[RMDB]
RNA sequence: GGGAACGACUCGAGUAGAGUCGAAAAGAUAUGGAUCUGUGAGAAACGAUGAGUAGCGGAUCGGAAACGAUCCCUACGAGUUUCCCAGAUCCUAAGUCAAAAGCUAUAUCCCUUCGGGGAUAUAGCACGAAACAUUCACGUUCGCGUGAAUGUUUCGAAAAGAAACAACAACAACAAC
Reactivity to DMS in 0.01 (KOAc 150mM, MgCl2 10mM, bicine 150mM(pH8.5), 24C), signal-to-noise 1, nucleotides 027 to 126: g000a030u000a010u000g000g010a010u000c020u000g030u000g010a200g010a000a040a000c000g030a190u010g000a050g000u000a010g000c300g030g010a020u000c000g010g000a010a000a010c000g010a000u000c000c000c000u000a000c000g010a010g050u010u000u000c000c020c020a000g060a000u000c010c000u000a000a070g000u010c000a170a120a100a170g020c000u000a010u010a000u000c000c000c000u010u040c300g030g040g000g020a000u000a000u000a000g000c000a060
Reactivity to 2A3 in 0.01 (KOAc 150mM, MgCl2 10mM, bicine 150mM(pH8.5), 24C), signal-to-noise 1, nucleotides 027 to 126: g000a010u010a020u070g000g000a000u000c010u040g150u140g200a300g070a300a010a010c040g190a300u300g010a050g020u030a030g000c190g200g000a020u000c000g000g000a000a000a020c000g010a000u000c000c010c000u000a000c010g010a020g000u000u030u020c030c000c010a000g000a000u000c000c000u000a000a000g030u020c010a000a000a080a190g000c000u020a000u010a000u010c010c000c000u020u080c300g090g000g000g010a000u000a000u010a010g050c000a010

The record gives the reactivity of an RNA of 177 nucleotides to DMS and 2A3. The data come from the RNA Mapping Database (RMDB), library TTRDES. Values are in units of 0.01, from 0 to 300, in steps of 10. Reactivities are given for positions 27 through 126. The reactions ran in a buffer of 150 mM KOAc, 10 mM MgCl2 and 150 mM bicine (pH 8.5), at 24 C.